Source: RMDB library RFM100, as collected in RNAgym. An RNA of 177 nucleotides, treated with DMS and read out base by base. The RNA was probed in 150 mM KOAc, 10 mM MgCl2 and 150 mM bicine (pH 8.5) at 24 C.

[RMDB]
RNA sequence: GGGAACGACUCGAGUAGAGUCGAAAAGCGUACGUUCUGAAGAACGGGCCAGGGAGUGUACGGCAGGGGCGAGGCUAAGGAGUGAAACUCCGAAGCCGGAGGGAAACCGACAGCCCGCAGCUUAUGCAAUGAUGGUGGGCUUCGGCCCACCAUCAUUAAAAGAAACAACAACAACAAC
Reactivity to DMS in 0.01 (KOAc 150mM, MgCl2 10mM, bicine 150mM(pH8.5), 24C), signal-to-noise 1, nucleotides 027 to 126: g000c060g000u050a040c030g000u000u000c060u000g000a130a280g040a060a050c050g090g000g010c090c030a220g000g090g000a060g050u010g090u030a040c090g070g000c000a080g000g000g000g000c080g000a190g090g000c000u000a000a290g000g000a050g100u000g000a040a190a270c000u000c000c010g000a200a060g000c040c010g040g040a170g000g000g000a090a220a060c050c040g080a140c150a190g050c000c000c170g020c140a040g010c080u020u000a000u270g010c090